Source: RMDB library OK1LIB, as collected in RNAgym. Structure probing data (DMS and 2A3) for a 177-nucleotide construct. DMS adducts were read by reverse transcription with MarathonRT. The 2A3 profile rests on 9,786 reads. Values are in units of 0.01, from 0 to 300, in steps of 10.
RNA sequence: GGGAACGACUCGAGUAGAGUCGAAAAAAGGGGGAAGUGCUAGUAUUAUGGAACCUCAGGCGGCUGAUGCGGUUUCGACAAUGGCGCCUAUAUCAAUGAUUGAAAGAAACAUGAACAGAAACAGCAAGCUAAUACAUAUGUUCGCAUAUGUAUUAGCAAAAGAAACAACAACAACAAC
Reactivity to DMS in 0.01 (KOAc 150mM, MgCl2 10mM, bicine 150mM(pH8.5), 24C), signal-to-noise 7, nucleotides 027 to 126: a060a070g010g000g000g010g020a110a090g010u020g000c040u020a050g020u020a050u020u000a050u000g000g000a080a070c070c040u010c060a040g020g030c050g020g000c070u000g010a090u030g010c050g000g010u000u020u020c030g000a080c110a060a090u010g010g000c050g000c020c020u010a090u020a080u010c100a070a060u020g000a120u000u000g000a050a050a060g010a090a040a060c070a080u050g000a060a070c130a080g050a120a020a030c060a050g020c300a060a090
Reactivity to 2A3 in 0.01 (KOAc 150mM, MgCl2 10mM, bicine 150mM(pH8.5), 24C), signal-to-noise 8, nucleotides 027 to 126: a000a000g120g010g010g000g010a050a050g040u070g090c040u040a050g070u040a150u210u050a090u150g050g010a030a030c000c020u030c030a020g060g010c060g040g000c030u040g050a080u070g030c020g050g030u030u090u110c030g010a040c050a070a080u060g020g000c010g030c000c010u080a100u010a010u120c090a130a070u110g070a090u090u160g070a080a060a040g070a020a100a010c050a050u110g050a060a030c070a120g110a060a100a000c020a010g040c050a060a040